[RMDB]
The data come from the RNA Mapping Database (RMDB), library OK2TRN. Chemical mapping of a 177-nucleotide RNA with 2A3 and DMS. The reactions ran in a buffer of 150 mM KOAc, 10 mM MgCl2 and 150 mM bicine (pH 8.5), at 24 C. For DMS, 2,724 sequencing reads were counted. Values cover nucleotides 27 to 126. Values are in units of 0.01, from 0 to 300, in steps of 10.
RNA sequence: GGGAACGACUCGAGUAGAGUCGAAAAGAAUUAGAUGUGCUUAAAGUAUUGGAUCAUGAGAAUGUAGUAAAACUUUAUCAAGUUAUCAACAGUGACUAUAAAGAUUCGCUGUGUAUGGUCCUCAACACUCGUACGAUUAGUUCGCUAAUCGUACGAGAAAAGAAACAACAACAACAAC
Reactivity to 2A3 in 0.01 (KOAc 150mM, MgCl2 10mM, bicine 150mM(pH8.5), 24C), signal-to-noise 3, nucleotides 027 to 126: g030a020a060u190u110a040g050a110u100g070u070g080c050u100u070a040a100a050g040u050a180u090u160g000g040a010u020c000a000u030g010a030g070a230a110u200g030u080a030g030u030a010a060a040a050c030u050u020u030a100u170c080a060a000g030u010u000a050u090c040a030a040c000a050g010u000g030a000c010u000a010u030a160a120a010g040a040u030u030c020g000c010u000g010u000g020u030a010u030g000g000u000c000c040u040c040a060a050c020a010
Reactivity to DMS in 0.01 (KOAc 150mM, MgCl2 10mM, bicine 150mM(pH8.5), 24C), signal-to-noise 4, nucleotides 027 to 126: g020a090a110u010u020a080g010a100u010g000u000g000c080u000u000a060a090a080g020u010a100u000u000g000g010a050u000c010a040u010g000a170g000a120a090u000g020u000a030g010u000a020a060a010a050c020u000u000u000a020u000c150a060a030g010u000u000a020u000c070a080a090c270a140g000u000g000a030c060u010a070u010a010a040a030g010a140u000u000c090g000c010u010g010u020g010u000a030u000g010g000u000c000c000u000c220a040a050c140a090